Description: The record gives the reactivity of an RNA of 207 nucleotides to 2A3 and DMS. The data come from the RNA Mapping Database (RMDB), library OK3TST. DMS adducts were read by reverse transcription with MarathonRT. For 2A3, 1,725 sequencing reads were counted. Reactivities are given for positions 27 through 156.
RNA sequence: GGGAACGACUCGAGUAGAGUCGAAAAUAGUGCCUGUAGCGCAGACCGACGAGCUCAUGUCACUCCUUGAUGAGGUCCCCACUCUUUCUGUAAGCGAAAGUAUUGCUGGACGUGCCUAUCAACGUGGAGAACCAGAUAUUAUUGAAGACGCGCGUCAGUAUGCCUUCAAGUUCGCUUGAAGGCAUACAAAAGAAACAACAACAACAAC
Reactivity to 2A3 in 0.01 (KOAc 150mM, MgCl2 10mM, bicine 150mM(pH8.5), 24C), signal-to-noise 4, nucleotides 027 to 156: u160a000g090u080g020c030c010u140g150u220a070g050c020g010c010a010g070a030c030c080g050a050c030g010a030g010c010u030c040a050u100g070u040c010a010c050u030c020c010u010u040g080a070u050g070a050g000g000u070c000c030c000c000a050c010u030c020u020u070u030c030u050g160u190a140a020g060c040g080a010a030a010g070u080a130u090u180g130c180u030g000g010a030c040g070u110g010c000c000u160a180u090c020a040a040c110g110u040g000g020a100g020a070a030c030c000a050g040a090u080a050u180u090a080u090u160g030a090a010g020a010c070g030c010g000c000g020u010c010a000
Reactivity to DMS in 0.01 (KOAc 150mM, MgCl2 10mM, bicine 150mM(pH8.5), 24C), signal-to-noise 2, nucleotides 027 to 156: u000a090g000u000g030c030c030u010g010u010a220g020c050g060c000a060g000a070c130c050g000a160c020g020a250g040c010u000c050a060u000g000u000c000a160c050u000c010c000u020u000g020a080u010g010a150g040g000u000c010c000c020c050a100c100u000c020u010u000u000c050u000g000u010a120a150g030c140g020a050a030a080g040u010a120u000u000g020c040u000g020g010a060c070g040u000g000c010c000u000a160u010c010a000a050c100g020u000g010g040a090g010a040a080c020c040a080g000a120u010a080u000u010a140u000u000g010a030a090g020a070c080g010c020g060c030g060u020c050a220